The record gives the reactivity of an RNA of 177 nucleotides to DMS and 2A3. The RNA was probed in 150 mM KOAc, 10 mM MgCl2 and 150 mM bicine (pH 8.5) at 24 C. It was measured as part of the RMDB library M2PK90.
RNA sequence: GGGAACGACUCGAGUAGAGUCGAAAAUAAAACACGUAACGUGAGCACAGUCGGUAGUGCAGCAGGACCGAAACCUGCAGCGAAAGGCAUCAAGACCCUGUUCGCGCAAAAACCGAAGAAAAAAAAAUCAAACACUAUCGUUCGCGAUAGUGUUUGAAAAAGAAACAACAACAACAAC
Reactivity to DMS in 0.01 (KOAc 150mM, MgCl2 10mM, bicine 150mM(pH8.5), 24C), signal-to-noise 1, nucleotides 027 to 126: u000a090a040a110a160c050a020c010g010u000a050a150c110g030u020g000a150g020c010a000c000a050g050u010c000g000g010u000a060g000u000g000c020a030g010c020a020g000g000a120c010c080g000a170a060a020c030c010u000g000c000a180g000c040g040a010a010a040g000g020c050a070u000c150a090a210g020a070c140c010c050u000g030u000u000c020g000c000g010c170a040a010a010a060a010c000c000g000a030a210g040a070a040a000a010a030a040a060a110a100
Reactivity to 2A3 in 0.01 (KOAc 150mM, MgCl2 10mM, bicine 150mM(pH8.5), 24C), signal-to-noise 1, nucleotides 027 to 126: u120a030a070a010a090c070a000c040g100u170a260a000c120g010u080g050a030g000c010a010c010a020g040u000c000g030g020u030a020g000u000g000c050a020g000c000a000g030g050a060c000c080g030a040a000a030c000c000u020g000c010a000g000c010g000a060a000a000g000g000c010a060u090c130a230a120g120a170c020c000c000u060g260u090u020c020g000c000g000c070a120a030a000a030a000c010c040g000a040a040g030a050a010a010a000a000a000a000a000a000